[RMDB]
An RNA of 177 nucleotides, treated with DMS and 2A3 and read out base by base. DMS adducts were read by reverse transcription with MarathonRT. For 2A3, 3,539 sequencing reads were counted.
RNA sequence: GGGAACGACUCGAGUAGAGUCGAAAAUAAUAUCUAGAACGCACGCUAUCUUCAGAGCCAGCUACCUAUACUUAUGUUCAGGAGAGUAUGUACCCACAAUUAUUAAGAGAGCAUUGGCAACUCAGAGAUACGCAUAUAGCUUCGGCUAUAUGCGUAUAAAAGAAACAACAACAACAAC
Reactivity to DMS in 0.01 (KOAc 150mM, MgCl2 10mM, bicine 150mM(pH8.5), 24C), signal-to-noise 3, nucleotides 027 to 126: u060a060a080u030a060u000c020u000a090g010a060a110c090g000c050a040c100g020c040u030a070u000c020u020u010c070a080g000a090g000c050c010a050g000c050u010a060c090c040u020a020u000a020c050u010u010a000u020g030u010u000c010a120g010g000a110g000a060g030u010a040u010g000u010a090c000c000c010a090c150a020a080u030u050a050u020u050a040a080g000a090g000a100g010c040a030u000u000g000g000c030a040a050c010u010c010a060g000a150g010
Reactivity to 2A3 in 0.01 (KOAc 150mM, MgCl2 10mM, bicine 150mM(pH8.5), 24C), signal-to-noise 4, nucleotides 027 to 126: u100a010a040u120a050u090c080u040a030g020a170a020c060g000c110a020c000g030c010u030a030u130c010u120u070c060a030g000a010g050c010c010a000g010c040u050a060c000c010u060a040u060a150c010u110u090a080u200g050u030u120c030a040g000g090a020g030a000g050u050a030u150g070u090a090c000c010c030a020c020a050a050u180u190a080u080u170a080a010g080a010g010a000g080c040a050u080u090g030g010c030a060a040c010u000c050a010g000a000g020